This 177-nucleotide RNA was probed chemically with 2A3 and DMS. 2A3 adducts were read by reverse transcription with SuperScript II with manganese. Values cover nucleotides 27 to 126. For DMS, 867 sequencing reads were counted. The 2A3 profile rests on 1,556 reads. In probing experiments dimethyl sulfate is read out at A N1 and C N3, which are open when not base-paired.

RNA sequence: GGGAACGACUCGAGUAGAGUCGAAAAGAUAUGGAAUGUCCGUCCCUCUGAUGACCUGCUUCGGAAACGAAGCAGCAAGGAGUGACGGAGCAUUCCUAAGUCAAAGUUUUAGGUUCGCCUAAAACAACGACUUGGUGAGGUUCGCCUCACCAAGUCGAAAAGAAACAACAACAACAAC
Reactivity to 2A3 in 0.01 (KOAc 150mM, MgCl2 10mM, bicine 150mM(pH8.5), 24C), signal-to-noise 1, nucleotides 027 to 126: g000a030u210a060u300g050g050a000a000u020g050u000c000c010g020u040c090c140c000u000c030u010g300a300u070g010a100c000c010u020g020c000u020u000c010g000g090a050a090a060c030g020a010a000g000c010a000g060c040a070a210g010g000a000g030u000g000a000c000g000g010a010g000c010a000u000u030c000c000u020a120a010g070u030c070a140a000a180g020u000u030u080u070a000g050g050u030u100c300g120c010c000u000a000a000a010a010c010a010a040
Reactivity to DMS in 0.01 (KOAc 150mM, MgCl2 10mM, bicine 150mM(pH8.5), 24C), signal-to-noise 1, nucleotides 027 to 126: g000a080u000a300u000g030g000a000a020u000g000u010c000c000g010u000c020c130c000u020c000u000g020a090u000g010a050c300c000u040g000c010u000u000c000g010g020a140a200a240c000g010a000a000g000c010a000g020c010a080a070g010g010a020g020u000g000a030c000g000g010a010g060c000a010u010u000c000c010u000a040a010g000u020c040a110a280a090g040u010u000u000u000a040g010g010u000u030c190g000c020c000u000a000a000a010a000c010a070a270